[RMDB]
RNA sequence: GGGAACGACUCGAGUAGAGUCGAAAAGAUAUGGACUUACCUUGAGGCAGGACUAUUCGGAAACGAACGAAUCCUGCUACCCACCAAGUGUAAGUCCUAAGUCAAAACCACUAGUUCGCUAGUGGAACCAUCUUGAAUGCUUCGGCAUUCAAGAUGGAAAAGAAACAACAACAACAAC
Reactivity to 2A3 in 0.01 (KOAc 150mM, MgCl2 10mM, bicine 150mM(pH8.5), 24C), signal-to-noise 2, nucleotides 027 to 126: g020a000u050a030u100g000g000a020c010u000u010a000c000c000u000u040g000a050g030g000c010a000g000g030a020c160u160a160u070u030c020g050g010a090a110a100c040g030a020a050c040g050a080a180u010c000c000u030g000c000u010a010c000c020c020a060c010c000a070a000g080u110g000u300a000a000g010u010c000c000u020a020a000g020u000c010a000a000a060a210c000c000a000c000u020a000g040u070u090c300g010c230u000a000g000u000g000g000a000a060
Reactivity to DMS in 0.01 (KOAc 150mM, MgCl2 10mM, bicine 150mM(pH8.5), 24C), signal-to-noise 2, nucleotides 027 to 126: g010a020u000a300u000g020g000a000c020u000u000a000c010c000u000u000g000a060g050g020c000a000g000g000a010c070u010a200u010u010c000g010g000a110a080a130c040g030a040a010c110g010a110a140u000c000c000u000g000c000u000a000c050c040c110a300c130c000a000a020g040u020g000u000a000a000g010u000c000c010u020a000a120g000u000c030a060a080a090a060c000c010a000c010u000a010g010u000u000c220g010c020u000a010g010u000g000g000a060a100

Description
Chemical mapping of a 177-nucleotide RNA with 2A3 and DMS. The reactions ran in a buffer of 150 mM KOAc, 10 mM MgCl2 and 150 mM bicine (pH 8.5), at 24 C. Source: RMDB library TTRDEL, as collected in RNAgym. For DMS, 1,028 sequencing reads were counted. Values cover nucleotides 27 to 126.